RNA sequence: GGGAACGACUCGAGUAGAGUCGAAAAGAUAUGGACCGGAUCACCAAUGAUGCUUCCUACCCACCCUUUGACGCUUCGGAAACGAAGCGUCAAAGGAGGGAAGUUGAGGUGCGCACGGUCCUAAGUCGUGUAGGUUAAUCUUCGGAUUAACCUACACAAAAGAAACAACAACAACAAC
Reactivity to 2A3 in 0.01 (KOAc 150mM, MgCl2 10mM, bicine 150mM(pH8.5), 24C), signal-to-noise 1, nucleotides 027 to 126: g030a020u060a060u140g030g000a010c000c020g000g020a120u120c010a000c020c000a090a300u140g050a020u130g080c000u000u030c020c000u060a180c100c110c050a250c020c010c010u050u010u020g030a010c030g010c000u000u030c010g010g020a000a000a000c000g000a020a010g000c000g010u010c000a010a000a000g000g010a000g030g000g000a000a000g010u000u040g080a040g000g000u060g030c070g050c060a120c010g000g000u020c010c010u010a010a000g020u050c090
Reactivity to DMS in 0.01 (KOAc 150mM, MgCl2 10mM, bicine 150mM(pH8.5), 24C), signal-to-noise 2, nucleotides 027 to 126: g000a020u000a180u000g000g000a010c000c000g010g000a300u000c000a010c000c000a230a210u040g000a120u010g000c000u000u000c000c000u010a110c210c140c120a300c260c000c000u000u000u000g000a000c000g020c000u010u020c000g000g010a040a050a120c010g000a040a000g010c000g020u000c000a000a000a000g000g020a070g000g000g000a000a010g000u000u010g020a140g010g010u000g030c190g020c300a300c040g000g000u000c000c000u000a000a100g010u000c080